[RMDB]
RNA sequence: GGGAACGACUCGAGUAGAGUCGAAAAUAAAGAUGUGUUCGUACACUUCUCUGCUAUCCAGAACGAUGGUUACAAAUCUCUGGACGAAGGUCAGAAAGUGUCCUUCACCAUCGAAAGCGGCGCUAAAUUAAGACCUAGUAUUCGUACUAGGUCUUAAAAAAGAAACAACAACAACAAC
Reactivity to DMS in 0.01 (KOAc 150mM, MgCl2 10mM, bicine 150mM(pH8.5), 24C), signal-to-noise 9, nucleotides 027 to 126: u020a060a080a150g000a020u000g010u010g010u010u010c200g000u020a020c010a010c010u000u000c140u000c010u000g010c020u010a280u000c000c010a010g010a040a100c200g000a030u000g000g000u020u050a110c240a060a150a030u000c020u000c010u000g000g000a030c230g000a100a080g010g000u030c010a020g000a050a020a020g010u010g000u000c040c030u000u000c050a030c080c060a010u000c020g010a060a080a080g010c060g000g010c060g010c050u010a040a060a120
Reactivity to 2A3 in 0.01 (KOAc 150mM, MgCl2 10mM, bicine 150mM(pH8.5), 24C), signal-to-noise 6, nucleotides 027 to 126: u160a010a060a000g030a020u030g030u000g030u080u070c060g020u030a010c000a000c000u010u000c030u000c010u080g000c000u020a020u000c000c000a020g010a110a050c110g020a050u030g070g080u210u120a090c060a020a130a030u000c010u000c000u020g000g030a010c040g220a070a020g080g060u240c040a000g040a020a040a000g010u010g000u000c000c010u010u030c010a020c040c020a010u010c020g020a070a040a010g040c070g060g000c020g010c130u080a050a080a150
Structure probing data (DMS and 2A3) for a 177-nucleotide construct. Reactivities are given for positions 27 through 126.